The record gives the reactivity of an RNA of 177 nucleotides to DMS. The DMS profile rests on 866 reads. The RNA was probed in 150 mM KOAc, 10 mM MgCl2 and 150 mM bicine (pH 8.5) at 24 C.

[RMDB]
RNA sequence: GGGAACGACUCGAGUAGAGUCGAAAAAGAUCAGGAGUUUGAGACCAGCCUGGCCAACAUGGUAAAACCCCGUCUCCACUAAAAAUACAAAAAUCAGCCAGGUUUAGUGGCGCGAGCCUGUAGUCGAUAUGCUAUCGACUUUCGAGUCGAUAGCAUAAAAAGAAACAACAACAACAAC
Reactivity to DMS in 0.01 (KOAc 150mM, MgCl2 10mM, bicine 150mM(pH8.5), 24C), signal-to-noise 1, nucleotides 027 to 126: a080g030a110u000c060a020g010g010a100g050u040u010u010g010a080g010a050c060c050a060g020c020c010u000g010g010c040c080a070a040c090a020u000g010g030u010a060a030a100a090c010c010c010c040g000u000c020u000c010c030a060c020u000a010a030a050a060a030u020a040c080a020a050a040a010a060u020c140a060g010c030c030a010g010g010u000u000u000a060g000u000g010g010c120g020c090g000a100g010c000c020u000g010u020a050g030u020c080g010a200